[RMDB]
RNA sequence: GGGAACGACUCGAGUAGAGUCGAAAAAGCCAGGCGCUGUUGGGAUCGAAGCCGGGCCAGCAUGCGUUGGGUGGCCAGGGCGUCGCGGUGGCUGCGCCGAAACCCGUCGAUUCCUCGUGCGGUGGUCGUAUACGAUUAGGUUCGCCUAAUCGUAUACAAAAGAAACAACAACAACAAC
Reactivity to 2A3 in 0.01 (KOAc 150mM, MgCl2 10mM, bicine 150mM(pH8.5), 24C), signal-to-noise 8, nucleotides 027 to 126: a000g050c030c010a030g070g060c010g000c020u060g060u150u050g060g020g030a120u090c020g020a060a010g050c040c000g020g010g000c020c000a030g040c020a040u270g050c080g230u160u110g070g030g100u040g010g000c020c030a110g080g000g000c020g020u040c020g000c030g040g070u110g080g010c030u060g000c040g000c010c000g020a060a020a020c010c000c010g000u010c010g010a060u050u050c010c010u030c040g050u080g010c020g000g070u040g020g020u050c050
Reactivity to DMS in 0.01 (KOAc 150mM, MgCl2 10mM, bicine 150mM(pH8.5), 24C), signal-to-noise 9, nucleotides 027 to 126: a110g000c040c030a100g010g010c020g020c010u000g010u010u000g010g010g010a100u010c020g010a070a100g020c060c020g010g000g010c010c010a030g010c030a070u010g010c160g010u010u010g010g010g010u000g010g000c010c040a090g010g000g010c030g000u000c170g020c030g000g020u010g010g000c030u000g010c030g010c010c010g000a040a090a110c070c020c010g000u000c030g000a090u000u000c020c020u000c120g010u000g010c030g000g010u000g000g010u000c110
Chemical mapping of a 177-nucleotide RNA with 2A3 and DMS. The DMS profile rests on 37,958 reads. The RNA was probed in 150 mM KOAc, 10 mM MgCl2 and 150 mM bicine (pH 8.5) at 24 C. The 2A3 profile rests on 27,559 reads. For 2A3 the reverse transcriptase was SuperScript II with manganese.